[RMDB]
RNA sequence: GGGAACGACUCGAGUAGAGUCGAAAAGUUUAGAGUGAGUUCCAAGAUAGCCACGACUACAGAGAAUCCCUUUCUUGGAAAAACACAAACAACAACAAAGAAUGUUAAAGGGCUGAUGAGAUGGCUAAGUAGCAGCUAUAUUCGUAUAGCUGCUACUAAAAGAAACAACAACAACAAC
Reactivity to DMS in 0.01 (KOAc 150mM, MgCl2 10mM, bicine 150mM(pH8.5), 24C), signal-to-noise 3, nucleotides 027 to 126: g010u000u010u000a070g020a150g050u010g010a230g040u000u000c000c000a050a040g000a160u000a050g010c030c040a040c110g010a190c130u010a220c090a130g000a140g010a180a140u010c020c010c000u010u000u000c050u010u010g000g010a000a040a010a080a070c040a030c050a060a080a030c150a100a030c100a050a090c070a070a050a150g010a090a080u010g000u010u000a060a090a060g000g000g000c080u000g010a090u000g000a100g010a080u000g000g000c020u000a060
Reactivity to 2A3 in 0.01 (KOAc 150mM, MgCl2 10mM, bicine 150mM(pH8.5), 24C), signal-to-noise 1, nucleotides 027 to 126: g050u070u090u180a130g050a020g060u020g000a030g030u020u000c010c010a000a020g040a050u060a000g030c010c020a020c010g110a050c050u150a050c130a040g120a000g050a170a190u090c010c000c000u000u100u000c030u020u000g010g000a000a020a000a080a000c050a000c000a000a120a000c020a020a010c010a030a010c020a010a210a030g080a060a080u060g020u120u100a150a000a000g020g030g000c010u000g020a040u050g010a030g020a050u040g040g000c010u010a060

This 177-nucleotide RNA was probed chemically with DMS and 2A3.